[RMDB]
RNA sequence: GGGAACGACUCGAGUAGAGUCGAAAAGAAGAGAAAGGAGACACAGGGACAGUCUCCAGAGGUUCCUAAGGACUCGAUCGCGCCUGCCGGGAAUCAUGGACUCCCGGUUGUCCAUGAUAGAAGAAGACAUCCGAGUGACUUUCGAGUCACUCGGAUGAAAAGAAACAACAACAACAAC
Reactivity to DMS in 0.01 (KOAc 150mM, MgCl2 10mM, bicine 150mM(pH8.5), 24C), signal-to-noise 1, nucleotides 027 to 126: g010a130a080g030a120g040a130a220a210g050g030a040g000a100c010a130c090a160g040g000g000a090c180a160g050u000c000u010c000c000a060g000a130g000g060u000u000c000c020u000a070a100g040g030a000c000u000c020g000a030u000c000g040c280g000c030c010u000g030c080c020g000g010g000a080a040u000c010a030u000g010g000a020c010u000c000c000c030g020g030u040u010g000u000c030c010a080u010g000a060u000a020g000a030a090g000a010a150g010a120
Reactivity to 2A3 in 0.01 (KOAc 150mM, MgCl2 10mM, bicine 150mM(pH8.5), 24C), signal-to-noise 1, nucleotides 027 to 126: g050a030a030g150a000g160a120a040a050g000g070a080g000a010c060a020c170a210g000g250g000a080c030a080g010u000c000u020c010c000a000g000a000g000g020u040u080c000c000u050a030a070g110g000a070c000u000c050g070a070u020c030g000c020g000c050c000u050g030c000c000g000g020g000a010a010u010c000a000u040g000g000a020c020u000c000c040c010g060g020u000u020g000u000c000c050a090u080g000a050u010a000g040a180a000g060a010a000g140a050